RNA sequence: GGGAACGACUCGAGUAGAGUCGAAAAUCUCGUGAACUGUAUGUUUUCCGCUACGAUUUCAAAGGGUGUGAGCAAACAGUCAAUUGAGAAUUUGAGAGAUGUGCGGUCAAUGGCGUCAGCUCAACAUAUGGUUGCUAUGCAAGGGUGGGGGAAUUGGUAAUGUAAUGAUCUUCGGAUCAUUACAUUAAAAAGAAACAACAACAACAAC
Reactivity to 2A3 in 0.01 (KOAc 150mM, MgCl2 10mM, bicine 150mM(pH8.5), 24C), signal-to-noise 8, nucleotides 027 to 156: u010c000u010c010g020u040g030a070a050c010u020g020u030a040u040g030u050u100u200u050c030c020g010c040u150a300c070g090a170u100u170u300c170a090a070a040g040g010g000u040g050u110g030a020g000c000a050a070a010c010a010g040u010c020a050a100u130u190g020a030g020a060a120u100u130u150g080a090g010a010g010a030u080g050u040g070c080g020g000u050c060a070a090u080g020g010c010g040u060c050a020g010c010u040c060a030a090c010a080u130a060u100g050g010u030u040g020c030u060a040u130g010c020a040a030g040g000g010u090g010g000g000g000g040a030a030u090u040g050g010
Reactivity to DMS in 0.01 (KOAc 150mM, MgCl2 10mM, bicine 150mM(pH8.5), 24C), signal-to-noise 5, nucleotides 027 to 156: u000c010u000c020g020u000g010a060a070c040u010g040u000a050u000g020u000u000u010u000c130c060g000c040u000a110c060g020a140u000u010u000c110a100a130a190g000g000g040u000g020u000g020a100g010c040a040a090a060c020a050g010u000c030a080a140u000u010g000a100g010a070a160u000u010u000g000a140g010a130g010a100u000g020u000g020c040g010g010u010c070a060a090u000g030g040c040g020u000c060a090g000c030u000c030a050a070c060a080u000a080u000g010g010u000u000g020c030u000a060u000g020c040a050a120g010g020g040u000g000g010g020g030g020a060a070u010u010g010g010